[RMDB]
RNA sequence: GGGAACGACUCGAGUAGAGUCGAAAAUGGUGGACCGCUUGAGGCCGGGAGUUCUGCGGCGUGCUGUCCUAUGGCGAUCGGGCGUCCACGCUAAGUUCGGCAUCGAUAUGGUUACCCCGGGGGAGCCCAGGGCAACCAGGUCGUCUAAGGAGGGACGGCACAAUUUAGAGUUCGCUCUAAAUUGUGCAAAAGAAACAACAACAACAAC
Reactivity to 2A3 in 0.01 (KOAc 150mM, MgCl2 10mM, bicine 150mM(pH8.5), 24C), signal-to-noise 1, nucleotides 027 to 156: u170g000g000u030g040g000a040c110c090g000c040u010u030g030a010g040g030c010c000g020g020g020a070g060u230u080c050u090g040c020g130g040c110g070u170g000c010u050g010u030c050c000u120a210u180g010g000c040g160a290u040c020g000g010g000c000g000u000c000c020a010c020g020c040u040a100a000g080u030u050c000g030g010c030a080u060c020g020a050u040a060u150g010g000u010u000a040c000c000c000c000g000g000g010g020g090a160g090c000c010c020a020g010g010g020c000a000a000c000c000a010g000g030u000c000g000u000c020u090a060a020g060g030a030g050g020g020a010c000g000

This 207-nucleotide RNA was probed chemically with 2A3. Conditions: 150 mM KOAc, 10 mM MgCl2 and 150 mM bicine (pH 8.5), 24 C. The data come from the RNA Mapping Database (RMDB), library ARCHII.